[RMDB]
RNA sequence: GGGAACGACUCGAGUAGAGUCGAAAAAUACGCUCUAGAGCUGUGCUCACUAAAGUAUGCUUCGAAGAAGGUCGCAGUAUUAUAGGUAGACUUAAAUCGGUGGCAUUCAUACGUACGAUAACACCAGCACAUGGUGCUACUUCGGUAGCACCAUGUGAAAAGAAACAACAACAACAAC
Reactivity to DMS in 0.01 (KOAc 150mM, MgCl2 10mM, bicine 150mM(pH8.5), 24C), signal-to-noise 2, nucleotides 027 to 126: a120u000a040c110g020c100u010c100u010a070g050a080g040c030u000g000u010g010c000u000c070a130c170u000a070a090a090g000u000a010u000g000c050u000u010c010g030a030a080g000a300a070g010g010u000c010g000c060a080g010u000a050u000u000a130u000a050g010g000u000a080g030a030c030u000u000a010a130a120u000c000g000g020u000g000g000c040a020u000u010c060a150u000a110c110g020u000a030c140g000a090u000a030a090c040a090c000c020a080g020
Reactivity to 2A3 in 0.01 (KOAc 150mM, MgCl2 10mM, bicine 150mM(pH8.5), 24C), signal-to-noise 2, nucleotides 027 to 126: a000u050a000c040g000c020u020c030u140a040g000a030g060c070u090g050u090g120c010u040c010a040c050u110a060a030a040g010u030a000u050g000c030u060u040c020g030a030a010g050a040a020g060g000u020c010g000c020a010g090u140a070u300u250a140u170a070g120g030u030a070g020a000c000u050u050a070a040a030u020c020g000g070u060g040g010c030a030u020u020c000a030u050a090c040g020u000a010c010g090a060u060a150a040c060a010c080c010a010g070